[RMDB]
RNA sequence: GGGAACGACUCGAGUAGAGUCGAAAAGUGUGUCUGGGCAUUGUUCCGGUGCUGGCCGGGUUGGCCGCCAAGGUGCUGGAUUCCGGUCUGCUGUGACGAUCCGGGGAAAGGAAGAUAUUGAUGAACAACCUAUAGUAGUGUUCGCACUACUAUAGGUAAAAGAAACAACAACAACAAC
Reactivity to 2A3 in 0.01 (KOAc 150mM, MgCl2 10mM, bicine 150mM(pH8.5), 24C), signal-to-noise 9, nucleotides 027 to 126: g110u100g010u020g020u040c030u060g020g020g000c040a070u060u110g060u130u050c020c010g020g020u050g010c080u060g010g000c010c010g050g020g000u090u120g080g020c010c010g010c020c030a100a070g120g020u170g040c030u080g030g060a060u160u040c000c000g000g020u000c030u050g020c020u040g050u100g050a050c050g020a040u020c020c030g000g010g010g050a070a070a020g070g020a030a040g030a050u100a080u120u210g110a170u110g030a070a030c040a030
Reactivity to DMS in 0.01 (KOAc 150mM, MgCl2 10mM, bicine 150mM(pH8.5), 24C), signal-to-noise 9, nucleotides 027 to 126: g010u010g010u000g000u010c020u010g010g010g010c080a060u020u020g010u020u010c030c020g000g020u000g010c050u010g000g010c010c010g010g010g010u020u010g010g010c010c030g020c090c080a120a110g010g020u020g010c020u000g010g000a100u020u030c030c010g010g010u000c030u010g010c040u010g010u020g010a070c090g010a060u010c030c020g010g000g010g010a050a080a060g000g010a060a060g010a080u020a090u020u010g000a100u010g010a090a090c220a100